[RMDB]
RNA sequence: GGGAACGACUCGAGUAGAGUCGAAAACGCUCAGGUGUAGAGCGCAUACAGCUAGUACUACUCUAGCUGAACACCAGAUACGGCGGAAUUAUAUUACACCCACCCAACGCCGAAGGGACAGGGAUUACCUAGUACCUACGUUCGCGUAGGUACUAGGAAAAGAAACAACAACAACAAC
Reactivity to DMS in 0.01 (KOAc 150mM, MgCl2 10mM, bicine 150mM(pH8.5), 24C), signal-to-noise 3, nucleotides 027 to 126: c010g000c010u000c000a080g010g020u000g010u000a020g010a010g000c000g010c060a110u000a070c010a000g000c010u010a000g020u000a090c300u010a170c300u000c010u000a010g000c000u000g000a080a040c160a250c020c010a160g000a160u020a070c070g020g000c010g010g010a110a070u010u000a080u010a140u010u000a020c020a030c000c000c230a100c030c010c030a070a080c040g000c030c020g020a160a060g010g000g010a120c080a100g000g010g020a200u020u000a130
Reactivity to 2A3 in 0.01 (KOAc 150mM, MgCl2 10mM, bicine 150mM(pH8.5), 24C), signal-to-noise 2, nucleotides 027 to 126: c010g000c000u000c010a040g030g000u000g020u030a010g010a000g030c020g000c020a020u120a140c000a000g020c000u010a000g020u060a140c080u050a070c060u060c000u030a010g000c000u000g010a020a010c050a070c040c000a000g050a140u160a110c030g030g000c020g050g070a070a050u300u070a100u050a040u210u080a030c020a040c000c040c000a080c030c010c020a130a110c040g000c000c000g010a020a050g040g020g010a030c050a060g030g000g060a040u070u090a060

Structure probing data (DMS and 2A3) for a 177-nucleotide construct. For 2A3, 2,678 sequencing reads were counted. Conditions: 150 mM KOAc, 10 mM MgCl2 and 150 mM bicine (pH 8.5), 24 C. Values cover nucleotides 27 to 126.